RNA sequence: GGGAACGACUCGAGUAGAGUCGAAAAGAUAUGGAGUGAUGAUCGCAACAGCUUUGAUUCGGAAACGAAUCUGAAGACAUGCGACCAUCACUCCUAAGUCAAAGGUGCCGAGUUCGCUCGGCACCAAGAUAAUACCCCGGUUCGCCGGGGUAUUAUCAAAAGAAACAACAACAACAAC
Reactivity to 2A3 in 0.01 (KOAc 150mM, MgCl2 10mM, bicine 150mM(pH8.5), 24C), signal-to-noise 2, nucleotides 027 to 126: g000a020u030a000u100g000g000a010g010u000g000a000u010g010a020u020c030g000c110a300a300c080a300g000c020u030u020u020g000a000u010u000c000g000g000a020a020a010c020g000a000a000u010c030u100g050a000a000g030a020c110a220u300g010c000g000a000c010c000a000u000c000a000c000u010c000c000u010a000a000g000u000c020a000a000a180g000g000u010g030c020c000g020a020g000u090u270c300g060c190u000c000g010g000c000a000c000c010a000a000
Reactivity to DMS in 0.01 (KOAc 150mM, MgCl2 10mM, bicine 150mM(pH8.5), 24C), signal-to-noise 2, nucleotides 027 to 126: g000a020u000a300u000g000g000a050g050u000g010a000u000g030a010u000c010g020c000a050a050c220a160g000c000u000u010u000g000a030u000u000c000g010g000a060a080a090c010g010a020a000u000c010u010g020a020a010g030a030c050a300u000g010c020g040a030c020c000a010u000c000a010c010u010c000c000u000a010a030g010u000c040a130a170a140g000g020u010g040c030c010g010a000g040u000u010c300g000c010u030c000g000g030c010a000c010c010a000a050